[RMDB]
RNA sequence: GGGAACGACUCGAGUAGAGUCGAAAAGCGACGGACUUUGUCGAGCUGCUCCGGCGGGGGCGAAACAGGAUCGAUGGCCGCGAAGAAGUGUUGAAUUGUUCCCGGCAUGAUACCGCCGUUAUCGGGUUUUCUUAGUUACAUUCGUGUAACUAAGAAAAAAAGAAACAACAACAACAAC
Reactivity to 2A3 in 0.01 (KOAc 150mM, MgCl2 10mM, bicine 150mM(pH8.5), 24C), signal-to-noise 4, nucleotides 027 to 126: g050c010g060a050c000g060g060a070c030u120u110u110g050u050c020g020a040g010c020u070g000c000u010c040c020g030g000c030g000g020g000g010g010c040g000a050a030a000c060a050g040g050a050u050c020g010a020u080g060g000c030c000g030c030g020a050a050g040a050a020g050u050g030u110u080g050a110a080u070u060g010u030u030c000c020c000g000g040c020a030u070g010a030u030a070c000c010g010c000c020g030u030u010a060u140c040g010g000g010u010
Reactivity to DMS in 0.01 (KOAc 150mM, MgCl2 10mM, bicine 150mM(pH8.5), 24C), signal-to-noise 6, nucleotides 027 to 126: g020c070g010a080c030g010g000a090c060u020u010u010g010u010c030g010a080g010c040u010g010c030u000c020c020g010g010c030g010g000g000g000g000c020g010a080a080a100c200a090g010g000a060u000c030g000a070u000g000g020c020c030g000c070g000a080a060g020a080a110g010u010g000u000u000g000a110a120u010u000g000u000u010c020c000c000g000g000c080a040u020g020a070u000a070c020c010g000c010c020g010u010u010a030u010c020g000g010g010u000
Chemical mapping of a 177-nucleotide RNA with 2A3 and DMS. Conditions: 150 mM KOAc, 10 mM MgCl2 and 150 mM bicine (pH 8.5), 24 C. Values cover nucleotides 27 to 126.